[RMDB]
RNA sequence: GGGAACGACUCGAGUAGAGUCGAAAAACGUACCUACAAAGGUCGCUCUUUGGACACACCCUAAAGCGCUUCCUGAGUGGGCAUUCGGUCAGCAGGAGGUGAACGGCAACAAGAAUGCCGCCGAAAGGUCCCAUUUAGGAUUCGUCCUAAAUGGGACAAAAGAAACAACAACAACAAC
Reactivity to 2A3 in 0.01 (KOAc 150mM, MgCl2 10mM, bicine 150mM(pH8.5), 24C), signal-to-noise 5, nucleotides 027 to 126: a000c060g070u090a020c000c010u000a020c040a020a060a000g030g010u010c000g030c020u020c010u040u040u070g060g030a020c020a010c010a060c160c020c020u120a090a070a010g060c010g000c010u030u050c000c010u040g070a110g150u120g040g010g000c010a040u140u190c070g090g030u020c020a070g010c020a020g020g060a020g050g060u060g030a090a030c040g030g000c000a040a040c020a200a050g080a150a030u060g000c000c010g030c000c020g100a130a090a020g090
Reactivity to DMS in 0.01 (KOAc 150mM, MgCl2 10mM, bicine 150mM(pH8.5), 24C), signal-to-noise 2, nucleotides 027 to 126: a140c070g010u040a090c020c000u000a000c030a040a130a060g000g040u000c050g000c010u000c000u000u020u000g020g000a180c080a100c210a150c080c040c020u000a060a030a090g010c080g000c040u000u000c010c000u010g000a300g020u020g000g000g010c060a120u010u060c140g030g000u000c050a050g010c020a030g000g010a100g010g020u000g000a010a110c020g000g000c010a020a130c090a100a090g000a170a060u020g000c000c060g000c080c040g000a070a040a090g000

Source: RMDB library OK1LIB, as collected in RNAgym. An RNA of 177 nucleotides, treated with 2A3 and DMS and read out base by base. The reactions ran in a buffer of 150 mM KOAc, 10 mM MgCl2 and 150 mM bicine (pH 8.5), at 24 C. For DMS, 2,809 sequencing reads were counted.